An RNA of 207 nucleotides, treated with 2A3 and read out base by base.

RNA sequence: GGGAACGACUCGAGUAGAGUCGAAAAAAGUAUUGCUAUAGUUAACGUUGCGCUUGCCUAUUUAGGCAUACUUCUCAGGAUGGCGCGUUGCAGUCCAACAAGAUCCAGGGACUGUACAGAAUUUUCCAAAACGCGUCGAGGUUCGCCUCGACGCGAAGGAUACUAACCGGUUCGCCGGUUAGUAUCCAAAAGAAACAACAACAACAAC
Reactivity to 2A3 in 0.01 (KOAc 150mM, MgCl2 10mM, bicine 150mM(pH8.5), 24C), signal-to-noise 1, nucleotides 027 to 156: a010a000g210u190a140u030u110g020c020u110a010u060a110g200u120u170a220a010c070g000u040u220g010c010g000c130u050u050g000c000c020u060a200u110u300u230a010g000g000c000a000u010a040c020u030u120c040u010c120a000g040g000a090u190g030g000c000g000c020g010u060u130g000c000a000g000u000c000c000a080a000c000a000a130g090a150u150c170c080a020g000g060g000a000c000u000g000u010a000c000a000g220a070a210u030u030u080u120c040c020a040a000a050a050c000g000c000g000u010c000g000a000g000g020u030u050c070g020c000c000u000c000g000a010c000g000c000g000a000a000